[RMDB]
RNA sequence: GGGAACGACUCGAGUAGAGUCGAAAAGAUAUGGACAGAUCCAUCGCCGAGGUCGGAAACGACUACCCACCGGUAAUGGAGUCUGUCCUAAGUCAAAUCACGUCAGUUGUUCGCAACUGACGUGAAACCCGUAUCGAAUGUUCGCAUUCGAUACGGGAAAAGAAACAACAACAACAAC
Reactivity to 2A3 in 0.01 (KOAc 150mM, MgCl2 10mM, bicine 150mM(pH8.5), 24C), signal-to-noise 1, nucleotides 027 to 126: g050a020u050a000u070g000g010a000c000a000g020a010u040c000c000a000u020c030g000c030c000g010a030g000g040u000c010g000g060a020a020a080c030g030a040c000u100a120c060c080c000a070c040c040g000g050u060a040a000u010g020g000a040g190u080c020u000g000u000c000c000u000a040a000g000u010c030a000a050a170u010c000a000c010g030u000c000a010g000u000u000g080u100u160c260g000c180a000a000c000u040g010a010c000g010u000g000a010a000a020
Reactivity to DMS in 0.01 (KOAc 150mM, MgCl2 10mM, bicine 150mM(pH8.5), 24C), signal-to-noise 1, nucleotides 027 to 126: g000a010u000a300u010g000g000a000c010a000g010a210u000c000c010a000u000c000g020c000c010g000a080g000g000u000c000g000g000a050a070a100c000g020a010c000u010a040c000c000c010a300c030c000g000g000u010a080a000u000g000g000a020g000u000c010u000g020u000c000c000u000a000a150g000u010c050a060a090a110u000c000a040c000g010u000c000a000g010u000u000g000u000u010c180g030c040a000a010c000u000g000a000c000g000u000g000a010a060a060
Overview: Conditions: 150 mM KOAc, 10 mM MgCl2 and 150 mM bicine (pH 8.5), 24 C. Chemical mapping of a 177-nucleotide RNA with 2A3 and DMS. For DMS the reverse transcriptase was MarathonRT. The 2A3 profile rests on 2,352 reads. Values cover nucleotides 27 to 126.